[RMDB]
Chemical mapping of a 177-nucleotide RNA with DMS and 2A3.
For DMS the reverse transcriptase was MarathonRT.
As a SHAPE reagent, 2A3 marks flexible, mostly unpaired nucleotides at the ribose 2'-OH.
Values cover nucleotides 27 to 126.
The reactions ran in a buffer of 150 mM KOAc, 10 mM MgCl2 and 150 mM bicine (pH 8.5), at 24 C.
Source: RMDB library OK2TRN, as collected in RNAgym.
For 2A3 the reverse transcriptase was SuperScript II with manganese.
DMS (dimethyl sulfate) methylates the pairing face of unpaired adenines and cytosines.
RNA sequence: GGGAACGACUCGAGUAGAGUCGAAAACGGGGAGUGUCGUGAAGGUGGGUGUGUCCAAGACAGGAGUCGCGCACAAAUCUUGCUGCACCCUGACUGAUGUAUACCUACCUGACCUUCAGCCCUACACGUCACACCAUGCAUUCGUGCAUGGUGUGACAAAAGAAACAACAACAACAAC
Reactivity to DMS in 0.01 (KOAc 150mM, MgCl2 10mM, bicine 150mM(pH8.5), 24C), signal-to-noise 1, nucleotides 027 to 126: c140g070g000g000g030a090g000u000g000u040c090g010u020g010a140a030g000g000u000g000g030g040u000g020u000g040u000c240c140a070a070g000a050c090a040g000g020a120g000u000c150g010c000g020c000a050c260a050a050a190u000c120u000u000g000c050u010g030c020a020c020c010c010u040g000a150c110u000g000a100u000g000u000a020u000a000c000c010u000a010c000c000u000g000a140c300c000u000u000c000a140g020c000c000c040u020a150c100a120c220
Reactivity to 2A3 in 0.01 (KOAc 150mM, MgCl2 10mM, bicine 150mM(pH8.5), 24C), signal-to-noise 2, nucleotides 027 to 126: c060g000g040g010g030a140g200u060g000u010c010g060u050g090a020a010g000g010u000g000g000g000u030g000u000g000u010c030c030a050a020g010a020c000a030g000g070a210g080u130c130g050c000g000c080a020c100a040a260a110u150c090u080u090g010c080u130g040c000a000c000c010c000u000g010a010c000u030g060a080u090g100u070a010u040a010c010c000u000a000c000c000u010g000a050c010c000u010u020c010a050g010c010c000c000u060a080c100a030c090